This 207-nucleotide RNA was probed chemically with DMS and 2A3. Source: RMDB library M2RFPK, as collected in RNAgym.
[RMDB]
RNA sequence: GGGAACGACUCGAGUAGAGUCGAAAAAUACAUUCCUGUGCCGGCAAUACAGUGUGUAUGGAGGUCUCAAUGGCUCGGAAGUGCCAGCAUACCGGCGUAGAUAUUAGCAGACGUAUGGGCGUAAGACAAAAGAGAAUGAUGUUCGCAUCAUUCUCAAGAAAUUGUAAUCCUUCGGGAUUACAAUUUCAAAAGAAACAACAACAACAAC
Reactivity to DMS in 0.01 (KOAc 150mM, MgCl2 10mM, bicine 150mM(pH8.5), 24C), signal-to-noise 2, nucleotides 027 to 156: a080u020a080c040a070u010u000c260c010u000g020u000g000c010c000g030g000c000a070a110u010a090c050a090g020u000g040u010g030u000a000u000g000g000a080g020g040u000c020u000c040a090a090u010g020g000c030u010c030g000g010a120a180g030u000g040c020c020a080g020c060a080u000a050c050c000g000g000c030g000u010a070g020a130u000a070u000u000a040g000c030a040g020a070c060g000u000a080u000g010g000g000c060g030u000a020a090g000a100c060a050a050a050a150g010a020g010a020a000u010g020a020u000g010u000u010c300g020c010a030u010c000a020u000u000c010u000c000a020a050
Reactivity to 2A3 in 0.01 (KOAc 150mM, MgCl2 10mM, bicine 150mM(pH8.5), 24C), signal-to-noise 3, nucleotides 027 to 156: a000u120a020c020a040u050u070c000c000u020g040u020g030c010c030g040g020c060a020a100u090a080c060a110g090u020g040u010g020u120a070u080g050g050a040g050g060u030c040u010c060a030a110u070g020g000c040u020c060g040g060a090a020g040u020g060c030c010a020g020c010a030u030a080c030c010g020g010c010g030u040a010g030a080u050a040u140u140a030g020c040a000g020a090c050g060u080a080u140g060g000g020c040g020u040a020a010g050a060c060a060a100a010a010g000a000g010a010a000u000g000a000u000g020u050u100c130g000c070a000u000c000a000u010u010c000u000c000a000a010

2A3 adducts were read by reverse transcription with SuperScript II with manganese. For DMS, 3,875 sequencing reads were counted. The 2A3 profile rests on 2,053 reads.